The record gives the reactivity of an RNA of 177 nucleotides to DMS and 2A3. The RNA was probed in 150 mM KOAc, 10 mM MgCl2 and 150 mM bicine (pH 8.5) at 24 C. It was measured as part of the RMDB library M2PK90. For DMS the reverse transcriptase was MarathonRT. Reactivities are given for positions 27 through 126. The 2A3 profile rests on 659 reads.

RNA sequence: GGGAACGACUCGAGUAGAGUCGAAAAGCAAAUAAGAUUUAGGGGAAGAAGAUGACAACCUUCUCGCGGUCUUCCCUGUUACGUGUGUAGACACAAAGAAUGUCAUCAAAACUAAAUAUACAAAAAAUACGAGUAUCAGAUUCGUCUGAUACUCGUAAAAAGAAACAACAACAACAAC
Reactivity to DMS in 0.01 (KOAc 150mM, MgCl2 10mM, bicine 150mM(pH8.5), 24C), signal-to-noise 1, nucleotides 027 to 126: g000c110a090a060a150u000a060a070g000a190u010u000u000a050g000g000g000g000a040a000g010a170a100g000a010u000g000a030c000a030a040c010c000u000u000c040u000c070g040c190g000g000u000c000u000u000c000c000c000u000g000u040u000a040c210g000u000g010u020g020u060a050g020a040c000a010c010a010a060a220g010a060a060u000g000u000c000a020u000c000a100a080a160a180c130u000a050a050a030u010a090u020a090c010a020a050a140a070a050a030
Reactivity to 2A3 in 0.01 (KOAc 150mM, MgCl2 10mM, bicine 150mM(pH8.5), 24C), signal-to-noise 1, nucleotides 027 to 126: g000c020a030a120a160u300a240a060g030a060u050u160u190a070g000g030g000g060a000a000g000a070a000g000a010u010g010a000c000a000a070c000c000u030u040c030u030c040g040c060g000g020u020c000u000u040c000c000c050u020g020u040u040a050c050g000u010g000u040g080u120a080g130a300c020a000c010a020a120a000g040a000a010u010g000u000c000a000u040c000a030a090a000a000c010u030a000a070a140u220a040u090a190c070a030a080a020a040a000a020